[RMDB]
RNA sequence: GGGAACGACUCGAGUAGAGUCGAAAAGGUCGUCUUUUCGAAGACGACCACUGUCGUUCCCAUAACUUUUCGAAACAUGUCGAAAGACAUGCUGAAACAGAAUUGGUGUGUGUUUCGACACACACAAAUCUAUACAAGGGUUCGCCCUUGUAUAGAUAAAAGAAACAACAACAACAAC
Reactivity to DMS in 0.01 (KOAc 150mM, MgCl2 10mM, bicine 150mM(pH8.5), 24C), signal-to-noise 8, nucleotides 027 to 126: g000g010u000c010g020u000c000u000u010u000u020c160g020a010a010g000a020c000g000a010c000c000a010c070u010g010u000c000g000u000u010c000c000c000a120u010a040a140c090u000u000u000u000c020g010a180a100a130c010a000u000g010u000c000g000a130a090a150g010a000c000a010u000g000c040u000g000a060a050a050c240a100g000a090a080u000u000g010g020u000g020u000g010u000g000u000u010u010c160g010a050c010a010c000a000c000a000c010a040a060
Reactivity to 2A3 in 0.01 (KOAc 150mM, MgCl2 10mM, bicine 150mM(pH8.5), 24C), signal-to-noise 9, nucleotides 027 to 126: g000g000u000c000g000u000c010u020u060u040u100c200g110a010a010g000a000c000g000a000c000c000a000c010u020g000u000c000g000u000u000c000c000c000a000u010a010a020c010u040u030u060u070c040g060a100a030a040c000a000u010g010u010c000g030a070a020a020g000a000c000a010u000g010c020u060g050a060a040a020c090a060g160a180a170u180u210g100g000u010g010u000g000u000g010u010u070u100c190g040a010c000a000c000a000c000a000c010a000a040

About this RNA
Chemical mapping of a 177-nucleotide RNA with DMS and 2A3. DMS (dimethyl sulfate) methylates the pairing face of unpaired adenines and cytosines. For DMS the reverse transcriptase was MarathonRT. For 2A3 the reverse transcriptase was SuperScript II with manganese. The reactions ran in a buffer of 150 mM KOAc, 10 mM MgCl2 and 150 mM bicine (pH 8.5), at 24 C. Reactivities are given for positions 27 through 126. Source: RMDB library M2PK50, as collected in RNAgym.